[RMDB]
RNA sequence: GGGAACGACUCGAGUAGAGUCGAAAACAUACGAAGUGCUUCGGCACUUCGUAUGGUUACUUAGGUUAACUAUUUAGUUUUACUGUUCAGGAUGCCUAUUGGCAGCCCCAUAAUAUCCAGGACAAACAACCUCCCCGAGCUUCGGCUCGGGGAGGAACCAGAACAAAAGAUUCGUCUUUUGUUCUGGAAAAGAAACAACAACAACAAC
Reactivity to 2A3 in 0.01 (KOAc 150mM, MgCl2 10mM, bicine 150mM(pH8.5), 24C), signal-to-noise 2, nucleotides 027 to 156: c000a000u000a000c000g000a000a000g000u000g000c000u010u130c200g070g050c020a000c020u000u000c000g000u000a000u000g000g000u020u050a040c020u020u020a010g000g020u060u060a030a040c010u030a090u300u170u230a110g020u010u000u040u030a010c000u010g000u010u010c000a000g000g010a000u010g000c000c000u010a080u070u080g090g020c020a030g040c000c000c000c010a040u090a130a040u050a050u030c010c000a030g000g020a000c090a050a070a000c030a000a050c000c010u010c030c000c000c010g000a000g000c020u080u240c300g050g010c000u000c000g000g050g000g000a000g010g010a020a010